This 177-nucleotide RNA was probed chemically with 2A3 and DMS. DMS adducts were read by reverse transcription with MarathonRT.
[RMDB]
RNA sequence: GGGAACGACUCGAGUAGAGUCGAAAAUGAACGUGCGUACAUCUCUCUCAGACUGUACCACAGUCUGACUCUCUCGCACUCUAGUUCCACGAGAGAGAGAGAGCGUUGGAACUAGGGUGAAAUGAAAGAAAUCAGGUAAGUUCGCUUACCUGAUUUCAAAAGAAACAACAACAACAAC
Reactivity to 2A3 in 0.01 (KOAc 150mM, MgCl2 10mM, bicine 150mM(pH8.5), 24C), signal-to-noise 3, nucleotides 027 to 126: u170g020a080a020c040g020u030g060c120g030u030a020c010a070u000c030u000c010u000c010u000c070a040g060a270c110u030g010u050a080c030c020a000c020a020g030u000c030u050g030a040c000u000c000u000c010u010c020g030c000a010c000u010c000u000a000g000u000u010c010c000a010c010g070a090g030a020g000a010g000a000g000a010g000a100g000c000g060u100u060g000g000a000a000c000u000a020g010g010g000u020g030a070a110a150u200g030a030a060a080
Reactivity to DMS in 0.01 (KOAc 150mM, MgCl2 10mM, bicine 150mM(pH8.5), 24C), signal-to-noise 3, nucleotides 027 to 126: u000g000a030a040c060g020u000g010c240g020u000a020c010a060u000c010u000c010u000c020u000c050a170g020a060c210u000g000u000a050c070c070a040c010a070g000u000c000u010g010a040c020u010c000u000c020u000c020g010c030a030c010u000c000u000a020g010u000u000c000c000a050c030g000a080g000a090g000a060g000a050g000a070g000a060g010c060g010u000u010g010g000a020a020c000u010a010g000g000g010u000g010a030a020a060u010g010a110a120a110